Notes:
Chemical mapping of a 177-nucleotide RNA with DMS and 2A3. It was measured as part of the RMDB library 15KREP. Conditions: 150 mM KOAc, 10 mM MgCl2 and 150 mM bicine (pH 8.5), 24 C. Reactivities are given for positions 27 through 126. For 2A3, 10,743 sequencing reads were counted.

[RMDB]
RNA sequence: GGGAACGACUCGAGUAGAGUCGAAAACAGAAGAUGUUACUGAAUCUGUGCAAGAAGAAGCACAACCAGUAGAAGUACCUGUUGAAGAUAUUGCGCAGGUUGUCAUAGCUGACACCUUACAGGAAACGAGAAUAGAUAUCUUCGGAUAUCUAUUCUCAAAAGAAACAACAACAACAAC
Reactivity to DMS in 0.01 (KOAc 150mM, MgCl2 10mM, bicine 150mM(pH8.5), 24C), signal-to-noise 7, nucleotides 027 to 126: c040a090g010a060a070g020a090u010g010u010u000a030c010u000g020a100a080u000c090u000g010u010g010c030a050a110g010a120a170g010a120a140g010c080a050c010a010a050c080c040a030g000u000a020g010a130a070g010u000a050c050c020u000g010u000u010g010a090a090g010a090u010a060u000u000g010c070g020c090a010g010g010u000u000g010u000c040a070u010a110g010c210u000g000a020c020a030c020c000u000u010a050c070a070g000g010a070a070a100c200
Reactivity to 2A3 in 0.01 (KOAc 150mM, MgCl2 10mM, bicine 150mM(pH8.5), 24C), signal-to-noise 5, nucleotides 027 to 126: c020a010g100a090a010g050a100u070g020u110u030a010c010u030g030a030a050u060c040u030g020u010g010c020a030a030g100a090a020g050a080a010g160c020a010c010a020a030c020c020a000g010u020a010g030a110a020g060u040a040c000c010u010g020u050u080g050a060a020g030a090u090a070u130u140g030c060g000c030a010g020g000u020u070g030u020c020a030u080a100g040c070u050g010a000c000a010c020c000u010u060a040c030a040g120g000a070a030a020c070